[RMDB]
Description
An RNA of 177 nucleotides, treated with 2A3 and DMS and read out base by base. The 2A3 profile rests on 868 reads. Source: RMDB library OK1LIB, as collected in RNAgym. Conditions: 150 mM KOAc, 10 mM MgCl2 and 150 mM bicine (pH 8.5), 24 C.

RNA sequence: GGGAACGACUCGAGUAGAGUCGAAAACCGUGCCUAUCUCUCGCCCGCCAGCAGGUGUGCUAACCUGACCAUUCGCGAAGGCGCUGUUGCAAACCGCAUCCUCUUCGAAGGGAAGAGAGCGAUCGGGCGACGCUAGUCCUUUCGAGGACUAGCGUCGAAAAGAAACAACAACAACAAC
Reactivity to 2A3 in 0.01 (KOAc 150mM, MgCl2 10mM, bicine 150mM(pH8.5), 24C), signal-to-noise 2, nucleotides 027 to 126: c010c000g020u070g090c040c010u180a250u090c010u070c050u040c060g030c010c060c000g020c040c000a020g000c010a010g010g000u040g060u050g080c090u140a100a000c000c010u030g060a120c030c020a080u150u080c040g000c030g050a190a000g060g000c020g010c030u020g000u060u070g000c060a060a040a070c020c010g000c050a020u030c000c030u010c010u080u050c020g100a130a180g200g030g000a030a010g020a000g000a040g030c020g000a050u070c010g040g060g000
Reactivity to DMS in 0.01 (KOAc 150mM, MgCl2 10mM, bicine 150mM(pH8.5), 24C), signal-to-noise 2, nucleotides 027 to 126: c000c000g030u040g020c000c000u000a090u060c040u000c010u000c020g000c020c000c000g040c200c070a040g030c020a000g060g000u030g050u030g000c130u000a040a050c020c010u020g010a140c050c020a140u010u040c150g080c070g050a060a160g000g030c140g010c020u000g010u000u010g010c070a020a110a070c140c070g000c040a060u030c050c030u000c000u000u000c000g050a230a170g000g000g000a050a010g000a010g000a080g040c200g000a030u000c070g030g030g000